[RMDB]
Description
This 177-nucleotide RNA was probed chemically with DMS and 2A3. The data come from the RNA Mapping Database (RMDB), library OK1LIB. For 2A3 the reverse transcriptase was SuperScript II with manganese. For 2A3, 8,892 sequencing reads were counted.
RNA sequence: GGGAACGACUCGAGUAGAGUCGAAAACAAAACAGGGCAAAAUAAAGACUAGUUAAGCCCAAACUAGCAAAAGGCCAAAAGAAGGCCAAGCGUAGUGCAACUGAAGCAGUACGCAAUUCAGUUAAAACCUAAUAUGAGGUUUCGACCUCAUAUUAGGAAAAGAAACAACAACAACAAC
Reactivity to DMS in 0.01 (KOAc 150mM, MgCl2 10mM, bicine 150mM(pH8.5), 24C), signal-to-noise 4, nucleotides 027 to 126: c070a080a030a140a130c230a100g000g000g040c030a120a050a070a090u020a130a050a070g010a120c010u010a010g000u000u000a000a180g000c010c000c000a040a010a020c020u010a000g000c230a120a090a100a090g000g060c000c010a060a080a060a100g030a080a110g010g020c010c010a050a140g000c000g010u000a000g000u000g020c040a120a090c300u040g000a110a080g010c020a040g000u000a010c040g010c010a080a060u030u030c180a100g000u000u010a040a100a060a100
Reactivity to 2A3 in 0.01 (KOAc 150mM, MgCl2 10mM, bicine 150mM(pH8.5), 24C), signal-to-noise 6, nucleotides 027 to 126: c050a000a070a020a020c110a080g020g010g010c080a120a060a090a020u260a070a180a010g080a020c010u010a000g020u000u040a120a010g000c000c000c010a000a000a000c000u010a000g000c020a000a010a080a120g000g000c020c020a060a160a000a020g130a100a050g020g010c000c020a020a010g000c010g000u020a040g190u010g010c030a130a100c130u170g060a160a010g000c010a030g120u020a000c000g000c000a020a070u090u080c020a000g030u080u180a060a070a020a060